RNA sequence: GGGAACGACUCGAGUAGAGUCGAAAACGAGAUCGCGCAGCAGGUCGUGCGCCAGCACGUGCAGCACGAUCCGGCCGCGCUGAUCGCGGCCGCGCGCGAAGUGCUGGCCGCGGAGCCCGCGCUCGCACAUGACUGGUGCAUUCGUGCACCAGUCAUGAAAAGAAACAACAACAACAAC
Reactivity to 2A3 in 0.01 (KOAc 150mM, MgCl2 10mM, bicine 150mM(pH8.5), 24C), signal-to-noise 1, nucleotides 027 to 126: c000g010a020g020a170u190c060g030c000g030c020a060g010c000a020g070g130u090c010g000u030g020c130g000c000c010a050g040c010a020c100g150u190g060c100a100g060c060a050c030g010a030u010c000c080g040g000c000c020g000c000g000c040u110g070a060u170c030g000c000g000g000c000c030g010c030g000c010g000c000g020a080a000g000u040g000c030u050g000g000c030c020g000c010g030g020a060g040c010c010c020g040c010g000c010u050c000g000c030a040
Reactivity to DMS in 0.01 (KOAc 150mM, MgCl2 10mM, bicine 150mM(pH8.5), 24C), signal-to-noise 2, nucleotides 027 to 126: c050g030a040g000a090u000c040g000c000g020c170a080g010c040a140g020g000u000c000g000u000g010c110g030c020c050a100g010c060a080c220g000u020g020c060a190g030c020a040c000g010a110u020c130c080g000g000c030c030g020c000g000c220u020g000a070u000c000g020c000g000g030c020c020g040c000g020c050g000c040g000a090a110g020u000g010c030u000g020g020c010c020g040c040g000g000a170g040c020c150c040g000c050g000c020u000c030g010c160a240